[RMDB]
RNA sequence: GGGAACGACUCGAGUAGAGUCGAAAACGACAGCUUUUCGAAGCUGUCGAUUGGCAAAGGCUAGGACCGGCCAGACAAAGGUCCGAAAGCAAAUCGUAACGAAGCUCGCCUGCUUCGGCAGGCGAAACACCGAAUUCAGUUUCGACUGAAUUCGGUGAAAAGAAACAACAACAACAAC
Reactivity to DMS in 0.01 (KOAc 150mM, MgCl2 10mM, bicine 150mM(pH8.5), 24C), signal-to-noise 1, nucleotides 027 to 126: c030g000a000c030a000g020c000u000u000u000u010c100g000a030a010g000c000u000g000u000c000g010a020u010u010g000g000c110a100a110a150g010g000c010u010a070g050g010a000c000c010g000g020c000c040a050g000a060c170a010a090a160g000g010u010c000c010g030a090a110a040g010c090a120a120a100u000c080g030u000a060a070c070g040a070a120g000c120u000c020g030c000c000u010g000c000u000u000c140g030g010c010a000g000g000c010g000a010a050a170
Source: RMDB library M2PK50, as collected in RNAgym. This 177-nucleotide RNA was probed chemically with DMS. The DMS profile rests on 800 reads. Reactivities are given for positions 27 through 126.